[RMDB]
RNA sequence: GGGAACGACUCGAGUAGAGUCGAAAACGCACUAGCAAAAGACUGUCGACAAGCGAGCAGUCGACUUCAGGCCGCGACCGAACCCGACGAGACGACAACAACAUCUGUCAUCUCAAUGCGCUCACCAUGCUGUCAGAGAAUUCGUUCUCUGACAGCAAAAAGAAACAACAACAACAAC
Reactivity to 2A3 in 0.01 (KOAc 150mM, MgCl2 10mM, bicine 150mM(pH8.5), 24C), signal-to-noise 1, nucleotides 027 to 126: c070g050c010a010c150u140a000g030c010a000a020a060a090g040a100c030u040g050u060c000g060a080c000a100a040g040c020g100a010g070c030a020g000u030c000g010a000c000u060u070c050a000g010g000c000c030g080c080g050a070c170c030g040a070a060c050c000c010g000a100c130g000a010g000a000c010g010a000c000a050a020c020a120a040c020a120u180c120u090g000u070c000a050u020c000u000c000a030a040u190g000c040g000c000u000c010a030c000c020a020
Reactivity to DMS in 0.01 (KOAc 150mM, MgCl2 10mM, bicine 150mM(pH8.5), 24C), signal-to-noise 1, nucleotides 027 to 126: c110g000c070a080c070u000a030g010c030a130a020a030a130g000a020c160u030g000u030c010g000a060c090a030a100g010c030g000a060g060c090a100g000u000c030g000a030c070u000u000c110a120g070g030c030c010g000c070g020a140c140c080g020a180a140c030c000c000g070a100c200g000a050g000a030c000g040a030c070a020a120c170a040a100c160a070u010c100u000g000u000c000a090u000c040u000c060a080a030u000g000c100g000c050u030c020a030c110c140a090